[RMDB]
RNA sequence: GGGAACGACUCGAGUAGAGUCGAAAAGCGGGCAAACAGUCGUUGCUGAUUGGCGUUGCCACCUCCAGUCUGGCCCUGCACGCGCCGUCGCAAAUUGUCGCGGCGAUUAAAUCUCGCGCCGAUCAACGUACACAACCACGUUCGCGUGGUUGUGUACAAAAGAAACAACAACAACAAC
Reactivity to DMS in 0.01 (KOAc 150mM, MgCl2 10mM, bicine 150mM(pH8.5), 24C), signal-to-noise 1, nucleotides 027 to 126: g020c060g020g000g030c040a070a060a110c070a040g050u000c030g020u000u000g020c110u010g000a070u000u000g000g040c070g000u000u000g030c000c090a140c080c000u010c040c020a110g000u000c070u010g000g010c010c070c020u010g000c010a060c100g000c030g020c000c010g000u020c090g030c040a040a020a110u000u010g020u000c090g060c020g010g000c020g000a060u000u010a020a060a220u020c140u000c040g030c020g030c000c000g000a060u030c070a110a070c160
Reactivity to 2A3 in 0.01 (KOAc 150mM, MgCl2 10mM, bicine 150mM(pH8.5), 24C), signal-to-noise 1, nucleotides 027 to 126: g040c030g000g000g020c040a070a170a000c020a020g090u040c020g070u110u160g030c020u060g030a070u080u000g020g000c060g010u060u130g080c000c090a080c000c040u040c000c000a020g090u030c040u070g000g000c000c000c000u040g010c050a040c060g030c010g020c030c020g000u090c000g000c040a040a120a160u300u150g090u070c020g000c000g040g020c010g000a000u000u160a070a180a070u000c000u020c050g070c030g000c000c010g040a070u150c010a060a020c090
An RNA of 177 nucleotides, treated with DMS and 2A3 and read out base by base. The reactions ran in a buffer of 150 mM KOAc, 10 mM MgCl2 and 150 mM bicine (pH 8.5), at 24 C. Values are in units of 0.01, from 0 to 300, in steps of 10. The 2A3 profile rests on 893 reads. 2A3 is a SHAPE reagent: it acylates the 2'-hydroxyl of flexible nucleotides of all four kinds. Values cover nucleotides 27 to 126.